[RMDB]
This 207-nucleotide RNA was probed chemically with 2A3.
RNA sequence: GGGAACGACUCGAGUAGAGUCGAAAAAGAUACUACAUUUUUUAGUUAGAUGUGUUUUGGAAGAGCAUUGACUUUUUUUCCUGUUACAUUGGAAAAAUUUAAUGGCACGUGUAUGUUAUUCUUAUCAUGAAGUGGGUUUAGGCAUGCUGCCUUAUAAAGUAUCCGAGGUAUUCGUACCUCGGAUACUAAAAGAAACAACAACAACAAC
Reactivity to 2A3 in 0.01 (KOAc 150mM, MgCl2 10mM, bicine 150mM(pH8.5), 24C), signal-to-noise 1, nucleotides 027 to 156: a000g050a010u110a050c050u160a020c040a100u040u060u080u100u170u190a030g000u040u060a080g000a070u050g040u000g010u050u080u020u120g020g040a000a020g030a020g020c010a010u020u070g020a100c020u280u000u000u000u000u030u000c000c010u010g060u140u120a150c060a060u040u120g050g000a040a030a030a000a010u080u250u160a060a070u060g020g000c010a010c080g020u010g020u000a060u050g000u060u020a020u100u000c030u040u070a040u120c030a070u100g030a040a040g000u060g030g000g040u040u070u080a020g010g000c000a000u050g040c070u020g000c000c000u080u070a100u020a050a120
Annotation: Source: RMDB library OK3TST, as collected in RNAgym.